[RMDB]
RNA sequence: GGGAACGACUCGAGUAGAGUCGAAAAGCCUUGGUAGGAAGGGGUGAGCCUGGGCAGGUGCCCAGCUUGGUGAGUCAGCCUCUGCAAUGGGACGGGGCUGAGCUGAGCUACACAAGCGGGUGUGGGGUACGCUUCUUGAAUUCGUUCAAGAAGCGUAAAAAGAAACAACAACAACAAC
Reactivity to 2A3 in 0.01 (KOAc 150mM, MgCl2 10mM, bicine 150mM(pH8.5), 24C), signal-to-noise 2, nucleotides 027 to 126: g020c000c020u010u050g070g050u100a020g050g040a130a010g050g050g020g000u070g030a010g050c000c030u000g020g020g000c050a080g010g300u290g080c000c000c000a020g000c010u000u010g030g020u070g020a140g100u020c000a000g000c020c010u080c070u080g080c070a140a300u220g120g060g000a020c080g040g000g000g000c020u000g000a020g000c010u040g000a010g000c010u070a070c150a000c000a080a070g010c000g030g000g000u080g040u090g060g020g020g010
Reactivity to DMS in 0.01 (KOAc 150mM, MgCl2 10mM, bicine 150mM(pH8.5), 24C), signal-to-noise 3, nucleotides 027 to 126: g020c050c020u000u000g010g020u000a100g010g010a110a080g010g000g010g010u010g010a120g010c160c050u010g000g010g040c020a160g010g010u010g020c010c030c020a030g010c020u000u000g010g040u000g020a150g010u000c020a030g000c010c000u000c020u000g050c070a180a100u020g000g020g000a160c120g000g000g000g010c010u000g000a050g000c080u000g000a090g010c060u000a090c130a050c120a070a060g000c090g000g010g010u010g010u000g000g000g010g010
Source: RMDB library OK2TRN, as collected in RNAgym.
This 177-nucleotide RNA was probed chemically with 2A3 and DMS.
For DMS, 2,907 sequencing reads were counted.